[RMDB]
RNA sequence: GGGAACGACUCGAGUAGAGUCGAAAAGAUAUGGAGGUGAGUAGGGAGCUGUCUAUCGGAAACGAUAGACAGCGAGGAUCUACUUCACCUCCUAAGUCAAAUCGUAGAGCGUUCGCGCUCUACGAAACAACCUGUAACACUUCGGUGUUACAGGUUGAAAAGAAACAACAACAACAAC
Reactivity to 2A3 in 0.01 (KOAc 150mM, MgCl2 10mM, bicine 150mM(pH8.5), 24C), signal-to-noise 1, nucleotides 027 to 126: g030a030u030a020u180g000g000a000g010g010u000g010a030g000u000a030g050g080g060a130g030c020u000g000u020c000u010a010u010c030g000g050a070a020a070c010g000a000u010a010g000a010c000a000g010c020g020a040g020g010a040u000c000u000a000c020u110u060c010a000c000c010u000c010c000u010a000a000g010u010c000a000a030a150u050c010g000u010a010g000a000g000c020g000u100u090c250g080c000g060c130u000c000u000a000c010g000a020a000a000
Reactivity to DMS in 0.01 (KOAc 150mM, MgCl2 10mM, bicine 150mM(pH8.5), 24C), signal-to-noise 2, nucleotides 027 to 126: g040a010u000a300u000g000g010a020g030g020u000g020a010g020u000a000g000g010g000a090g020c010u000g010u000c000u000a000u000c000g020g000a130a080a210c010g010a010u000a010g000a020c000a000g010c000g010a030g050g010a050u020c000u010a000c010u030u000c000a000c000c000u000c000c000u000a010a050g010u000c020a090a110a170u010c000g020u000a000g000a000g020c000g030u000u030c260g030c020g060c000u000c000u010a000c020g000a010a070a210